[RMDB]
RNA sequence: GGGAACGACUCGAGUAGAGUCGAAAAGUAGACGGCGUCCGCCCGGUUGCCCGCCUCGGCGAUCACGUCACCGGGCUCGAACUCCUCCUGGCGGAACCGGUCGGCCAGCGCGGUGAGCGCGUCCUCGCCAACAGCCUGAAUUCGUUCAGGCUGUUGGAAAAGAAACAACAACAACAAC
Reactivity to 2A3 in 0.01 (KOAc 150mM, MgCl2 10mM, bicine 150mM(pH8.5), 24C), signal-to-noise 3, nucleotides 027 to 126: g120u110a020g010a020c030g000g040c090g060u040c020c000g000c000c000c000g000g000u060u070g040c020c000c000g000c000c020u150c080g010g010c010g050a130u150c090a070c250g060u010c010a010c010c000g010g000g030c030u020c030g080a080a040c020u110c010c010u050c010c020u030g020g010c000g030g000a010a040c010c000g000g060u010c000g000g000c010c010a080g000c040g000c000g010g090u190g080a040g000c000g000c000g010u030c000c000u040c030g030
Reactivity to DMS in 0.01 (KOAc 150mM, MgCl2 10mM, bicine 150mM(pH8.5), 24C), signal-to-noise 2, nucleotides 027 to 126: g040u010a070g000a050c080g040g010c040g030u010c050c000g000c010c000c040g000g000u040u000g000c170c000c020g010c100c060u000c140g000g000c040g000a030u010c170a140c150g000u000c000a170c200c020g000g000g000c020u000c010g010a050a090c040u000c040c040u000c000c010u020g030g000c000g020g040a160a030c020c110g020g000u000c010g000g000c270c030a090g000c150g000c000g000g000u000g010a300g000c000g000c000g000u000c030c000u000c060g030
About this RNA: Chemical mapping of a 177-nucleotide RNA with 2A3 and DMS. For DMS the reverse transcriptase was MarathonRT. For DMS, 2,021 sequencing reads were counted. Source: RMDB library RFM100, as collected in RNAgym.